[RMDB]
RNA sequence: GGGAACGACUCGAGUAGAGUCGAAAACGAUCAGUACGUUCGCGUACUGAUCGAAGCUACUGGAGACAGUAGCAAGUCUAAGACCUUGUUAGGCGGAAACAAGGAAAAAUGGAGGAUGGCCGGACCUCCAUACUUAGACAACCGCCACCCGGCCUAAAGGAUAAUUUUAGUUCGCUAAAAUUAUCCUAAAAGAAACAACAACAACAAC
Reactivity to DMS in 0.01 (KOAc 150mM, MgCl2 10mM, bicine 150mM(pH8.5), 24C), signal-to-noise 1, nucleotides 027 to 156: c020g000a010u010c000a000g000u010a000c010g020u000u000c300g090c010g030u000a020c000u050g020a000u000c010g000a020a060g010c020u000a020c000u000g000g000a300g000a220c000a000g000u010a000g020c010a030a040g010u000c020u000a030a070g020a300c000c000u000u010g000u000u000a050g080g000c070g110g070a300a050a030c020a010a040g010g000a000a090a090a130a280u000g000g010a050g000g020a190u000g010g010c000c030g000g020a300c000c010u000c010c000a000u000a000c040u020u000a100g000a010c020a110a140c060c050g000c100c030a060c050c020c000g000g030c000c000u010a060a140
Reactivity to 2A3 in 0.01 (KOAc 150mM, MgCl2 10mM, bicine 150mM(pH8.5), 24C), signal-to-noise 3, nucleotides 027 to 156: c010g000a000u000c000a000g010u000a000c010g020u020u090c230g010c010g120u000a000c000u000g000a000u000c000g000a000a000g000c000u010a000c010u000g020g010a070g020a050c010a000g000u010a000g000c010a010a020g000u000c010u010a020a050g030a150c000c000u000u010g020u030u060a120g050g130c080g070g070a060a010a010c010a010a010g020g010a040a090a080a030a020u030g000g000a000g000g010a030u080g010g000c020c010g060g000a150c010c000u010c000c010a000u010a020c010u010u020a010g000a020c010a050a060c060c030g080c060c010a060c010c000c000g000g010c000c010u040a120a140
Source: RMDB library OK3TST, as collected in RNAgym. This 207-nucleotide RNA was probed chemically with DMS and 2A3. The 2A3 profile rests on 3,950 reads. For DMS, 1,734 sequencing reads were counted. The RNA was probed in 150 mM KOAc, 10 mM MgCl2 and 150 mM bicine (pH 8.5) at 24 C. DMS adducts were read by reverse transcription with MarathonRT. For 2A3 the reverse transcriptase was SuperScript II with manganese.